[RMDB]
RNA sequence: GGGAACGACUCGAGUAGAGUCGAAAAGAUUCCUCGUUGUUGAGCGAGGUUUAAACAAAUCGACCACACAAACGUAGAGCCGACUACGGAUUUAUAAAUUAAGGCAUUAAGUGUGAUAAGGAGUCAAAAAACGAUGUUGUGUUCGCACAACAUCGAACUAGAGAGGAGAGUUCGCUCUCCUCUCUAGAAAAGAAACAACAACAACAAC
Reactivity to DMS in 0.01 (KOAc 150mM, MgCl2 10mM, bicine 150mM(pH8.5), 24C), signal-to-noise 2, nucleotides 027 to 156: g030a230u000u000c010c020u000c080g040u000u020g040u000u000g010a080g020c040g010a090g010g040u000u010u000a050a080a100c040a020a060a150u000c010g000a050c020c010a110c070a300c010a030a180a080c000g020u000a000g010a180g010c060c040g020a070c050u000a010c060g010g000a260u010u000u000a060u020a030a060a090u010u010a040a050g020g020c040a300u000u020a020a070g030u000g000u000g000a070u010a070a110g000g010a090g010u000c000a000a010a090a050a080a170c010g010a010u000g030u000u000g010u000g010u000u010c300g100c010a020c000a020a020c000a020u000c000g000a000a080
Reactivity to 2A3 in 0.01 (KOAc 150mM, MgCl2 10mM, bicine 150mM(pH8.5), 24C), signal-to-noise 3, nucleotides 027 to 156: g080a090u190u120c000c000u000c000g000u000u000g000u010u000g000a010g020c000g000a000g020g020u050u050u070a010a020a000c060a000a010a010u000c000g000a010c010c000a000c000a000c000a020a100a000c000g010u000a000g000a020g020c010c000g030a010c000u010a000c000g010g000a000u040u300u020a170u120a120a020a020u100u150a000a000g000g010c010a000u060u230a090a100g010u010g000u010g010a000u020a030a070g130g030a040g080u130c110a020a030a030a040a120a100c020g000a010u000g000u000u000g000u000g030u050u090c240g020c090a010c000a000a010c000a010u000c000g000a010a000